[RMDB]
RNA sequence: GGGAACGACUCGAGUAGAGUCGAAAACGGCCCCACGAUUAUGGGUACACGUGGGUUGUCACAAUCCGUGGUGCAGCUACCCUGACGCAGAUCUAGAUAAGCACGGGCGACAAAAGGACUUAAUCCAACAGACAUACGAGUUCGCUCGUAUGUCUGUAAAAGAAACAACAACAACAAC
Reactivity to DMS in 0.01 (KOAc 150mM, MgCl2 10mM, bicine 150mM(pH8.5), 24C), signal-to-noise 3, nucleotides 027 to 126: c090g030g010c040c000c010c020a060c040g010a090u020u010a060u010g010g010g000u000a080c100a080c000g060u000g000g030g030u000u000g000u010c030a090c030a010a040u030c030c050g020u000g000g010u010g000c110a060g010c040u010a030c010c020c000u010g000a080c030g000c040a060g000a070u000c050u010a040g000a050u010a090a080g020c030a050c000g010g000g000c030g000a050c110a020a060a090a170g000g000a050c140u030u020a110a130u040c020c020a130
Reactivity to 2A3 in 0.01 (KOAc 150mM, MgCl2 10mM, bicine 150mM(pH8.5), 24C), signal-to-noise 4, nucleotides 027 to 126: c050g030g000c020c000c020c000a020c020g030a030u130u150a130u220g070g010g020u070a020c030a000c060g040u050g020g050g000u060u180g100u030c020a030c070a160a040u000c010c030g000u010g020g040u140g050c040a050g000c020u050a080c000c000c030u010g030a010c030g000c020a020g000a050u010c000u050a010g060a180u050a120a050g020c010a000c000g000g000g020c000g010a050c030a020a120a020a010g040g010a010c030u130u190a030a050u090c020c010a010

This 177-nucleotide RNA was probed chemically with DMS and 2A3. For 2A3, 2,984 sequencing reads were counted. Conditions: 150 mM KOAc, 10 mM MgCl2 and 150 mM bicine (pH 8.5), 24 C.